[RMDB]
RNA sequence: GGGAACGACUCGAGUAGAGUCGAAAACACAGCAAACAUAUGAUAAUUGAGCCCUUCAAUUGGUACCCCUGCCCCUUUAUCUCUAAUAGGUAGUUGAUCUAGAUGGUGUACAUCAAUAAGAGUAUUAAAACCAAACAUUAUUCGUAAUGUUUGGUUUAAAAGAAACAACAACAACAAC
Reactivity to 2A3 in 0.01 (KOAc 150mM, MgCl2 10mM, bicine 150mM(pH8.5), 24C), signal-to-noise 1, nucleotides 027 to 126: c050a010c000a020g070c030a050a090a100c010a050u140a080u200g070a050u120a170a080u130u030g010a000g070c040c080c000u000u020c010a010a040u000u050g060g000u080a060c030c000c040c030u010g070c020c000c000c000u000u100u080a080u020c020u000c000u060a050a150u020a100g000g100u000a030g070u090u050g000a040u040c010u020a050g030a080u060g070g020u030g060u090a050c010a050u060c000a060a010u140a080a030g000a030g050u040a270u030u300a000
Reactivity to DMS in 0.01 (KOAc 150mM, MgCl2 10mM, bicine 150mM(pH8.5), 24C), signal-to-noise 7, nucleotides 027 to 126: c070a100c110a070g020c090a060a090a090c090a090u010a070u000g010a100u000a050a080u010u000g010a100g010c030c040c020u000u000c060a050a060u000u010g010g010u000a120c040c040c010c030u000g010c040c010c010c060u000u000u000a040u020c020u000c050u010a070a110u000a060g010g010u000a050g020u010u000g000a040u000c040u000a070g010a050u010g000g010u010g020u010a080c050a030u010c020a050a070u010a070a070g010a070g010u010a080u000u000a070

The record gives the reactivity of an RNA of 177 nucleotides to 2A3 and DMS. Conditions: 150 mM KOAc, 10 mM MgCl2 and 150 mM bicine (pH 8.5), 24 C. For DMS, 9,363 sequencing reads were counted. The 2A3 profile rests on 822 reads.